[RMDB]
RNA sequence: GGGAACGACUCGAGUAGAGUCGAAAAUGUGGCUAGAUUUGCUAUGGUCUCCUAUAAUCUACCGAGAAAAUGGCUUUUAUACGUGUUCCUCAAACCCUAGAUCUCUAAAUGCAGAGUAGAGAGAGGCACUCUUACCAGUCCCUGAGUUCAGAGCUGAAAUCAACAUUACGUUCGCGUAAUGUUGAUUAAAAGAAACAACAACAACAAC
Reactivity to 2A3 in 0.01 (KOAc 150mM, MgCl2 10mM, bicine 150mM(pH8.5), 24C), signal-to-noise 2, nucleotides 027 to 156: u140g010u010g020g030c030u040a070g050a280u100u000u180g050c060u080a070u160g020g040u000c020u060c030c010u030a070u060a180a030u000c030u020a040c020c000g030a040g000a080a120a020a060u070g020g000c000u080u120u110u090a120u100a120c030g060u080g030u090u030c020c000u070c010a090a100a180c070c010c020u070a100g020a250u040c010u010c000u010a020a090a070u050g030c030a010g010a020g050u100a000g030a030g010a000g020a040g040g020c010a000c000u000c020u020u050a050c040c060a020g060u060c010c000c060u060g060a050g010u000u060c100a020g010a010g130c060u120g000a090
Reactivity to DMS in 0.01 (KOAc 150mM, MgCl2 10mM, bicine 150mM(pH8.5), 24C), signal-to-noise 2, nucleotides 027 to 156: u020g020u030g020g050c050u010a090g010a090u000u010u010g010c070u000a040u010g010g020u030c020u000c000c090u020a100u010a060a070u010c060u000a060c060c010g010a120g000a080a070a080a090u020g000g000c030u010u010u000u010a100u010a080c140g010u020g010u000u000c010c000u000c040a050a070a130c010c020c000u010a100g010a140u000c020u000c020u000a160a030a080u000g010c020a040g020a120g040u000a070g000a120g010a090g020a090g020g040c030a090c040u010c040u010u000a060c050c000a040g000u000c000c000c010u000g000a100g020u000u010c040a110g030a120g010c030u010g000a100